[RMDB]
This 307-nucleotide RNA was probed chemically with DMS and 2A3. The 2A3 profile rests on 2,782 reads.
RNA sequence: GGGAACGACUCGAGUAGAGUCGAAAACGAGCGGAAACGCUCGAAAGCGUGAGGGAACGUCGUGAGAUGGUGCUCGUGGAAGCCAGCAGAGGGUGUAGGGUCUCCUGGAGCCACAUCUCUGGAGUUACAUGAAGUUGUGGACCUCUCAACAUGGGUUCUGGGAACUGAACCCAGGUCCUCUGGAAGGACAUCGAGUGCUCUUAACCACUGAGCCAUCUCUGCAGCCUAACCCCAUCCCUUGGAGGCUGAAGCAAAGCAAGUUCAAAACGACGGAGUUCGCUCCGUCGAAAAGAAACAACAACAACAAC
Reactivity to DMS in 0.01 (KOAc 150mM, MgCl2 10mM, bicine 150mM(pH8.5), 24C), signal-to-noise 4, nucleotides 027 to 266: c000g000a000g010c000g020g000a140a110a220c010g010c000u000c010g010a060a090a100g010c080g020u000g020a090g030g000g000a100a090c090g000u010c170g000u000g010a030g020a020u000g020g030u010g010c150u000c020g020u000g010g020a190a120g020c150c250a100g000c060a040g020a130g000g000g010u000g000u010a160g010g000g000u010c110u000c010c020u010g000g010a030g010c020c020a080c030a020u000c110u020c290u010g020g000a050g000u000u020a120c040a020u000g010a130a140g010u020u010g020u000g000g010a100c300c020u010c010u000c090a060a160c300a040u000g020g000g000u000u010c010u000g010g010g010a070a070c070u010g010a120a060c010c010c000a100g020g010u000c000c000u000c040u030g000g010a120a030g000g000a020c000a130u020c140g000a140g030u020g000c010u010c060u020u000a100a100c030c020a020c020u040g010a070g000c020c020a040u000c000u000c020u010g030c000a030g000c010c010u010a090a150c020c000c010c050a150u010c030c010c040u010u000g000g010a090g000g020c030u010g000a160a240g010c140a060a080a100g000c140a080a140g010u010u020c040a050a080a100a180
Reactivity to 2A3 in 0.01 (KOAc 150mM, MgCl2 10mM, bicine 150mM(pH8.5), 24C), signal-to-noise 3, nucleotides 027 to 266: c000g000a000g010c000g050g010a130a020a030c010g010c000u010c000g020a020a010a000g030c040g040u120g060a130g020g060g040a110a000c020g070u090c050g120u150g060a010g000a020u010g030g030u080g020c000u000c000g000u000g000g000a040a030g040c140c080a000g020c030a000g030a100g090g020g010u050g050u090a040g050g030g040u030c020u040c050c010u020g010g000a000g020c020c000a160c020a140u040c080u020c040u080g030g000a040g030u080u190a020c010a010u090g200a300a060g170u300u300g010u080g020g040a040c000c000u010c010u000c080a090a090c020a040u010g000g000g000u030u020c010u020g030g000g000a060a050c040u050g030a010a020c020c020c020a020g060g020u000c010c000u030c030u040g070g050a080a050g040g000a010c030a080u160c140g070a070g160u100g010c030u000c000u080u080a160a130c000c010a020c070u110g000a000g000c000c000a020u000c010u000c000u010g000c000a020g000c010c010u030a070a080c020c000c010c000a080u080c010c000c000u010u020g030g020a030g060g000c020u040g070a040a020g050c080a040a070a090g080c090a070a070g090u140u150c080a090a290a080a030
It was measured as part of the RMDB library POS240.